[RMDB]
RNA sequence: GGGAACGACUCGAGUAGAGUCGAAAAGGGUAUUGAUGUGCAUGCUAUUCCUUCUUAUUACCAAAACCAGGAAGAUGAUGACGAAGAUGGAUUCACUGAUGAGGAAUCAGCAGAAGUGUCCUCAGAGGUGGGUUAACAGGUUCGCCUGUUAACCCACAAAAGAAACAACAACAACAAC
Reactivity to DMS in 0.01 (KOAc 150mM, MgCl2 10mM, bicine 150mM(pH8.5), 24C), signal-to-noise 1, nucleotides 027 to 126: g010g000g070u000a070u000u030g000a070u010g030u000g040c060a100u000g020c120u000a140u010u010c030c020u000u010c220u000u010a070u020u010a130c120c140a030a070a080a110c060c050a050g000g000a020a070g020a080u000g010a030u010g000a150c070g010a020a050g020a130u010g010g030a120u000u000c050a070c000u000g000a160u010g000a060g020g010a100a050u060c030a040g040c020a110g020a130a120g050u010g000u000c060c010u000c160a060g000a120g060